[RMDB]
RNA sequence: GGGAACGACUCGAGUAGAGUCGAAAACCCCGGUAGUCUUGGCUGUAAACGAUGAACACUAGGUUGGGGGGGCUUGUUCCUCCCAGCCGUAGCGAAAGCGUUAAGUGUUCCGCCUGGGGAGUAUGGUCAUCCAAUAUAACUUCGGUUAUAUUGGAUGAAAAGAAACAACAACAACAAC
Reactivity to DMS in 0.01 (KOAc 150mM, MgCl2 10mM, bicine 150mM(pH8.5), 24C), signal-to-noise 4, nucleotides 027 to 126: c030c000c000c060g010g020u000a060g020u000c060u000u010g010g000c010u000g010u010a080a100a140c150g010a130u010g010a030a040c010a010c010u000a140g020g020u000u000g010g000g010g010g010g000g000c050u000u010g010u010u000c000c000u000c000c010c000a000g010c000c000g000u000a030g010c000g000a120a080a220g010c010g010u000u000a030a100g010u000g000u000u000c010c110g000c050c020u000g020g000g010g010a120g010u000a070u010g020g000u000
Reactivity to 2A3 in 0.01 (KOAc 150mM, MgCl2 10mM, bicine 150mM(pH8.5), 24C), signal-to-noise 3, nucleotides 027 to 126: c000c000c000c010g030g160u130a090g040u020c040u060u120g090g020c030u040g070u160a060a060a070c060g110a180u180g010a020a000c000a010c020u020a060g000g000u000u000g000g000g000g000g040g000g000c040u120u170g060u150u020c000c000u010c000c000c000a000g030c000c010g010u010a000g000c000g020a060a050a010g010c010g010u050u120a050a020g010u000g000u000u010c000c010g000c000c020u040g030g000g010g010a050g040u140a140u250g100g030u030